[RMDB]
RNA sequence: GGGAACGACUCGAGUAGAGUCGAAAAAAAAAGAGCGUAAUCGCGUCAUUGAGUGACGUGAAGAUCAUCCAAGUGUGCUGUCUACAGUCGUUGAUAGCGCACAAUACGCUGAUGAUCAUUCAAAAAAGUUAAUAUAACUCUUCGGAGUUAUAUUAACAAAAGAAACAACAACAACAAC
Reactivity to 2A3 in 0.01 (KOAc 150mM, MgCl2 10mM, bicine 150mM(pH8.5), 24C), signal-to-noise 6, nucleotides 027 to 126: a000a000a000a030a010g110a010g010c060g070u100a090a040u050c000g000c010g010u000c010a030u090u300g170a090g280u040g000a000c000g000u010g020a030a030g000a010u010c000a000u000c020c040a150a130g010u000g010u000g000c010u010g010u000c010u020a040c040a260g210u220c150g010u130u020g010a010u010a010g000c000g000c000a000c000a000a010u080a030c030g000c020u000g000a010u000g000a000u010c030a050u160u170c120a100a100a040a030a020a000
Reactivity to DMS in 0.01 (KOAc 150mM, MgCl2 10mM, bicine 150mM(pH8.5), 24C), signal-to-noise 5, nucleotides 027 to 126: a020a050a040a060a050g000a040g010c030g010u000a090a050u000c020g010c000g010u000c010a030u000u020g010a130g010u000g000a010c010g030u010g000a030a080g000a020u000c010a020u000c000c130a130a120g020u000g010u000g020c010u000g010u000c000u000a030c030a160g010u010c240g010u000u000g000a010u000a010g030c000g000c000a000c000a050a060u010a170c080g000c050u000g000a020u000g000a020u000c010a170u000u020c060a000a050a070a060a090a080
Background
An RNA of 177 nucleotides, treated with 2A3 and DMS and read out base by base. Reactivities are given for positions 27 through 126. The DMS profile rests on 6,196 reads. The data come from the RNA Mapping Database (RMDB), library M2PK90. For DMS the reverse transcriptase was MarathonRT. For 2A3, 8,463 sequencing reads were counted.